[RMDB]
RNA sequence: GGGAACGACUCGAGUAGAGUCGAAAAGAUAUGGACGCGAAACAGGAGCAGGUCGGAAACGACCCUGCGCGAAACUGUAGCGUCCUAAGUCAAAACAUGUUCGCUCCCUUCGGGGAGCGAACAUGAAUCAGGCAAUAUUGUUCGCAAUAUUGCCUGAAAAAGAAACAACAACAACAAC
Reactivity to DMS in 0.01 (KOAc 150mM, MgCl2 10mM, bicine 150mM(pH8.5), 24C), signal-to-noise 2, nucleotides 027 to 126: g000a070u010a300u010g000g000a000c000g010c000g010a120a120a070c000a000g020g020a080g000c010a020g020g020u000c000g010g010a070a070a140c000g020a020c140c040c020u020g000c010g020c090g010a110a110a130c010u000g000u000a200g000c000g000u000c000c000u010a020a070g000u020c040a100a100a110a230c000a020u000g000u000u000c000g000c000u000c000c000c000u000u000c160g020g010g010g000a000g000c000g000a010a000c020a000u000g000a080a090
Reactivity to 2A3 in 0.01 (KOAc 150mM, MgCl2 10mM, bicine 150mM(pH8.5), 24C), signal-to-noise 1, nucleotides 027 to 126: g030a020u080a040u160g020g000a000c010g040c040g050a300a300a020c020a010g060g060a090g020c000a000g000g020u010c040g000g090a070a100a000c000g020a010c050c100c030u030g050c030g000c050g090a190a080a020c000u010g020u040a020g000c000g010u000c000c000u020a020a000g000u010c020a020a000a030a140c000a010u010g000u000u010c010g000c040u000c010c010c040u020u080c290g160g000g000g000a000g020c000g000a000a000c000a000u000g000a000a000

The record gives the reactivity of an RNA of 177 nucleotides to DMS and 2A3. The reactions ran in a buffer of 150 mM KOAc, 10 mM MgCl2 and 150 mM bicine (pH 8.5), at 24 C. The 2A3 profile rests on 2,248 reads. In probing experiments dimethyl sulfate is read out at A N1 and C N3, which are open when not base-paired.